An RNA of 177 nucleotides, treated with 2A3 and DMS and read out base by base.
RNA sequence: GGGAACGACUCGAGUAGAGUCGAAAAAAAUUAUGGUCGCCGGCACGUAUGUGCACACCGAGAAUGACACUCAUUCGCCGUCAACCGUGUCGGUAGUCUUGCACAUCAGGAAUCCGUCUGCGUUGAAUCUAUUGAGUUUGUUCGCAAACUCAAUAGAAAAAGAAACAACAACAACAAC
Reactivity to 2A3 in 0.01 (KOAc 150mM, MgCl2 10mM, bicine 150mM(pH8.5), 24C), signal-to-noise 1, nucleotides 027 to 126: a030a000a020u300u170a080u100g020g000u030c040g000c020c000g000g020c040a000c050g050u100a040u300g080u030g040c060a010c000a000c000c030g010a040g030a120a030u040g020a050c070a010c240u100c040a060u060u040c010g010c090c000g090u020c000a030a040c000c030g000u010g010u000c000g010g030u010a020g030u000c040u000u070g000c060a040c000a120u040c020a000g000g090a080a070u030c000c040g010u090c110u090g040c020g050u040u140g040a010a090
Reactivity to DMS in 0.01 (KOAc 150mM, MgCl2 10mM, bicine 150mM(pH8.5), 24C), signal-to-noise 4, nucleotides 027 to 126: a080a050a110u000u000a060u000g000g020u010c040g020c020c020g010g010c030a030c030g000u000a060u010g010u000g010c110a050c110a060c150c060g000a200g000a040a030u000g010a140c190a120c180u010c020a020u000u000c040g000c080c070g000u000c030a050a060c170c060g000u000g020u000c020g010g010u000a030g000u000c030u010u000g000c090a060c070a050u000c080a050g000g010a080a060u000c030c020g000u000c030u000g020c060g010u000u010g000a130a150

Overview:
The DMS profile rests on 2,840 reads.